[RMDB]
RNA sequence: GGGAACGACUCGAGUAGAGUCGAAAAUAGUCGGAAUUCGUUCCGACUAGAUGAACGCUGCAAGCGGCAGCGCGCUCAAAAGAGCACGCAAUAGCAACGCAAAAAUGAACUUAUUCGUAAGUUCAAACAAUUUCCAUAGGUUCGCCUAUGGAAAUUGAAAAGAAACAACAACAACAAC
Reactivity to 2A3 in 0.01 (KOAc 150mM, MgCl2 10mM, bicine 150mM(pH8.5), 24C), signal-to-noise 3, nucleotides 027 to 126: u010a000g010u000c000g000g030a020a030u080u010c150g020u100u000c020c010g000a010c010u000a000g000a020u120g040a090a030c050g010c080u070g020c070a090a210g040c030g060g000c040a020g000c000g000c010g000c010u010c010a260a300a090a060g010a010g000c010a000c010g030c020a020a050u050a130g020c040a040a030c060g010c070a040a070a080a000a020u070g000a000a000c010u010u010a020u070u060c090g070u030a000a010g000u010u010c000a040a020a000
Reactivity to DMS in 0.01 (KOAc 150mM, MgCl2 10mM, bicine 150mM(pH8.5), 24C), signal-to-noise 4, nucleotides 027 to 126: u000a010g010u000c000g010g000a030a050u010u010c190g010u000u000c000c000g000a010c000u000a010g000a140u000g010a170a100c090g030c080u000g010c080a130a220g000c050g010g000c090a230g010c000g020c030g020c000u010c000a070a110a080a150g000a010g010c000a020c030g010c020a090a080u020a100g010c030a050a070c160g010c070a030a060a050a100a100u000g000a010a010c010u000u000a020u000u010c170g020u000a010a010g010u000u000c000a070a060a150